[RMDB]
RNA sequence: GGGAACGACUCGAGUAGAGUCGAAAACAAGUCUGGUGCCAGCAGCCGCGGUAAUACCAGCUCCAGUAGCGUCUGUGUUUAUUGCUGCGGUUAAAACGUGCGUAGUCGGCUAGUUGUGUGAAUAGUGCUUAGUGAAAGUCUUCGGACUUUCACUAAGAAAAGAAACAACAACAACAAC
Reactivity to DMS in 0.01 (KOAc 150mM, MgCl2 10mM, bicine 150mM(pH8.5), 24C), signal-to-noise 2, nucleotides 027 to 126: c060a040a060g010u020c030u000g030g020u010g010c040c020a100g020c140a080g000c020c000g020c020g000g010u010a000a040u000a050c030c010a030g000c070u000c070c080a170g010u010a100g020c110g010u020c030u020g000u010g010u010u020u020a010u010u010g000c010u000g020c030g010g000u010u010a020a020a110a080c140g000u020g010c040g020u010a130g000u000c040g010g010c020u000a070g000u000u020g030u010g000u000g000a060a040u020a080g000u010g000
Reactivity to 2A3 in 0.01 (KOAc 150mM, MgCl2 10mM, bicine 150mM(pH8.5), 24C), signal-to-noise 3, nucleotides 027 to 126: c080a040a020g030u030c040u050g050g040u050g010c030c000a040g020c040a000g000c020c000g000c000g020g000u020a000a000u010a050c000c000a010g020c050u020c020c010a200g070u150a030g050c070g060u080c060u040g140u020g010u120u120u070a010u000u020g020c010u010g000c000g000g000u000u010a000a040a000a000c050g010u030g000c010g020u040a020g070u030c020g040g000c010u050a050g010u030u010g030u040g030u010g100a070a120u060a140g120u100g050
Source: RMDB libraries RFM100 and RFMREP, as collected in RNAgym. An RNA of 177 nucleotides, treated with DMS and 2A3 and read out base by base. DMS adducts were read by reverse transcription with MarathonRT. The 2A3 profile rests on 1,759 reads. For 2A3 the reverse transcriptase was SuperScript II with manganese. High 2A3 reactivity points to a flexible backbone, as in loops and unpaired stretches.